Description: The record gives the reactivity of an RNA of 207 nucleotides to 2A3 and DMS. DMS adducts were read by reverse transcription with MarathonRT. For 2A3, 1,956 sequencing reads were counted. The data come from the RNA Mapping Database (RMDB), library M2RFPK. Reactivities are given for positions 27 through 156.
[RMDB]
RNA sequence: GGGAACGACUCGAGUAGAGUCGAAAAAGACCACCUCUACGGAGCUGGUCAAGUCACGUAGCUAGUACCAGGUUGCAAUACUAGAGCGUUAGUCCUGGGGCGUACGGUGGCAGUACGCUGCCACCGAUAAAACUUGAAUACUUCGGUAUUCAAGUAACUUUAUGUCCAACUUCGGUUGGACAUAAAGAAAAGAAACAACAACAACAAC
Reactivity to 2A3 in 0.01 (KOAc 150mM, MgCl2 10mM, bicine 150mM(pH8.5), 24C), signal-to-noise 1, nucleotides 027 to 156: a000g000a000c010c010a000c010c010u000c010u050a070c290g080g010a000g000c020u000g030g010u010c010a020a000g130u070c030a010c070g010u050a020g060c010u000a000g000u030a160c000c000a000g010g010u030u000g010c000a000a000u000a000c000u010a000g010a020g010c070g100u130u120a000g010u090c000c000u000g010g000g030g070c160g070u140a060c030g020g010u010g000g020c000a000g010u040a000c260g020c040u000g010c000c000a010c000c000g010a000u020a000a050a010a010c000u000u000g000a000a010u010a000c000u020u040c130g090g000u000a000u010u000c010a010a000g000u000a020a000
Reactivity to DMS in 0.01 (KOAc 150mM, MgCl2 10mM, bicine 150mM(pH8.5), 24C), signal-to-noise 2, nucleotides 027 to 156: a140g000a050c000c020a040c060c010u000c020u000a060c260g130g030a040g010c050u020g050g050u000c020a070a040g000u010c080a120c040g010u000a120g040c010u000a000g000u010a040c030c010a060g020g030u000u000g000c050a130a080u000a020c000u010a020g010a230g030c040g020u000u000a070g010u010c000c020u000g000g030g010g010c100g000u010a030c000g020g050u010g010g070c010a080g030u000a080c190g050c050u000g010c000c000a010c010c000g010a010u000a000a050a070a060c000u000u000g000a020a020u000a010c000u000u010c300g030g000u000a010u000u010c000a010a000g030u000a010a050